RNA sequence: GGGAACGACUCGAGUAGAGUCGAAAACGCUUACGGUGUCGGACUCGGUGCCCGCGCUGGUGGCCGGUAACGCGGUGGUGCUCAAGCCGGACAGCCAGACGCCGUAUUGUGCGCUCGCGUGUGCCGAGUGGUGACGGUCAUUCGUGACCGUCACCACAAAAGAAACAACAACAACAAC
Reactivity to 2A3 in 0.01 (KOAc 150mM, MgCl2 10mM, bicine 150mM(pH8.5), 24C), signal-to-noise 1, nucleotides 027 to 126: c080g020c100u180u180a070c120g020g080u080g060u030c020g000g030a030c010u000c030g060g010u030g050c050c010c000g030c060g020c030u000g020g000u000g030g030c030c000g000g000u090a070a030c050g020c030g170g100u180g050g190u300g070c010u060c080a020a000g000c000c000g000g010a020c020a040g110c020c010a050g060a050c000g010c040c010g070u100a190u150u300g060u060g030c090g030c030u040c050g060c080g010u040g030u040g010c030c000g030a010